[RMDB]
The data come from the RNA Mapping Database (RMDB), library VIROID.
Chemical mapping of a 177-nucleotide RNA with DMS and 2A3.
The RNA was probed in 150 mM KOAc, 10 mM MgCl2 and 150 mM bicine (pH 8.5) at 24 C.
For DMS the reverse transcriptase was MarathonRT.
For 2A3 the reverse transcriptase was SuperScript II with manganese.
DMS (dimethyl sulfate) methylates the pairing face of unpaired adenines and cytosines.
Values cover nucleotides 27 to 126.
Reactivities are rounded to 0.1 and cut off at 0 and 3.

RNA sequence: GGGAACGACUCGAGUAGAGUCGAAAAUCCACCUUGGGGUGCCCUAUUCGGAGCACUGCAGUUCCCGAUAGAAAGGCUAAGCACUUCGCAAUGAAGUAAGGUGGGACUUUUCCUUCGGGAACCAAGCCGCUAUAUGUAUGUUCGCAUACAUAUAGCGAAAAGAAACAACAACAACAAC
Reactivity to DMS in 0.01 (KOAc 150mM, MgCl2 10mM, bicine 150mM(pH8.5), 24C), signal-to-noise 4, nucleotides 027 to 126: u000c010c020a110c220c100u000u000g030g020g010g000u000g010c010c020c000u000a190u010u000c230g010g000a080g020c000a010c030u000g010c080a300g010u010u000c000c000c000g010a020u000a060g000a010a020a020g000g000c020u000a130a220g000c100a060c000u000u010c010g020c160a160a090u010g000a020a020g000u010a050a090g010g010u000g000g010g020a090c010u010u000u000u000c000c020u000u010c020g000g000g000a010a030c020c050a100a250g000c150
Reactivity to 2A3 in 0.01 (KOAc 150mM, MgCl2 10mM, bicine 150mM(pH8.5), 24C), signal-to-noise 4, nucleotides 027 to 126: u000c010c000a050c030c030u110u100g170g010g000g020u010g010c000c000c000u120a290u100u270c150g000g020a140g040c000a010c030u060g040c010a010g000u020u020c000c000c000g020a010u010a030g040a000a010a000g060g000c090u140a030a040g040c010a000c030u010u030c030g010c160a250a300u300g000a040a020g030u070a060a070g120g040u060g000g030g050a110c000u030u020u020u030c000c010u000u010c010g000g010g010a000a010c000c010a040a020g090c020